[RMDB]
This 177-nucleotide RNA was probed chemically with DMS and 2A3.
It was measured as part of the RMDB library M2PK50.
The reactions ran in a buffer of 150 mM KOAc, 10 mM MgCl2 and 150 mM bicine (pH 8.5), at 24 C.
The 2A3 profile rests on 3,641 reads.
For DMS the reverse transcriptase was MarathonRT.
RNA sequence: GGGAACGACUCGAGUAGAGUCGAAAAUGGACGUUGUUCGCAACGUCCACAUACUGAGACGUACGUUAAACGUAUCGCGGGCAAAAGUGCAGUUAGAAUAUGUACCUAUUGAGUUCGCUCAAUAGAAGGGUUACUGUAAGUUCGCUUACAGUAACCCAAAAGAAACAACAACAACAAC
Reactivity to DMS in 0.01 (KOAc 150mM, MgCl2 10mM, bicine 150mM(pH8.5), 24C), signal-to-noise 2, nucleotides 027 to 126: u000g010g020a010c000g020u020u000g000u000u000c240g040c020a020a010c000g020u000c010c000a020c110a040u010a080c070u000g030a140g020a090c020g010u000a010c020g000u010u010a070a040a210c020g000u000a020u010c070g040c060g010g020g010c070a050a040a100a060g010u000g030c000a030g010u000u000a060g000a090a050u030a030u000g000u000a090c110c000u000a010u000u000g000a010g030u000u020c200g030c010u010c000a010a000u000a010g010a090a090
Reactivity to 2A3 in 0.01 (KOAc 150mM, MgCl2 10mM, bicine 150mM(pH8.5), 24C), signal-to-noise 3, nucleotides 027 to 126: u050g010g000a000c000g010u000u010g000u020u040c120g040c080a010a020c000g000u010c000c000a000c000a010u040a000c010u080g050a010g060a080c020g020u040a000c030g010u040u150a180a160a050c000g010u040a020u130c030g010c050g060g080g010c080a060a030a040a050g050u040g000c030a040g020u060u150a060g090a190a020u150a050u140g030u060a070c000c000u000a010u010u000g000a000g020u000u100c170g030c060u000c000a010a020u020a000g010a070a060